Chemical mapping of a 177-nucleotide RNA with DMS and 2A3. Reactivities are given for positions 27 through 126. For 2A3, 2,495 sequencing reads were counted. For DMS the reverse transcriptase was MarathonRT. Values are in units of 0.01, from 0 to 300, in steps of 10. The RNA was probed in 150 mM KOAc, 10 mM MgCl2 and 150 mM bicine (pH 8.5) at 24 C. Source: RMDB library OK2TRN, as collected in RNAgym.

RNA sequence: GGGAACGACUCGAGUAGAGUCGAAAAUGCCACCGCUGCCCGAUCUGGACGCGCUGCGGCCGUGGACGAGUCGCGAGGCCACGGCGGCGCGGUCGGUGCCGGACCGGCUCGCGAUCCUCGGCGCCGAUGGUGCUGAGGAUUUCGAUCCUCAGCACCAAAAAGAAACAACAACAACAAC
Reactivity to DMS in 0.01 (KOAc 150mM, MgCl2 10mM, bicine 150mM(pH8.5), 24C), signal-to-noise 3, nucleotides 027 to 126: u000g020c020c020a080c110c040g010c050u000g020c110c020c010g000a070u010c060u000g010g000a100c040g000c030g020c040u000g040c090g030g030c020c010g000u000g000g010a060c040g010a190g010u000c090g020c080g000a180g010g000c010c010a050c010g000g020c000g010g020c010g010c020g000g000u010c050g010g000u000g000c000c010g000g000a100c040c020g010g010c040u010c110g000c030g000a040u000c050c040u010c060g020g000c020g020c030c020g000a110
Reactivity to 2A3 in 0.01 (KOAc 150mM, MgCl2 10mM, bicine 150mM(pH8.5), 24C), signal-to-noise 1, nucleotides 027 to 126: u070g010c030c000a050c040c040g000c010u080g080c010c050c030g040a100u020c060u090g050g020a030c020g050c010g020c050u150g040c030g140g060c000c030g020u020g000g040a060c050g030a040g080u140c060g060c090g160a100g060g000c010c020a030c020g010g000c000g040g020c000g020c000g010g030u040c030g060g000u060g030c020c000g000g040a030c020c000g040g000c040u010c030g040c000g040a090u050c010c010u050c040g010g000c030g030c000c010g040a050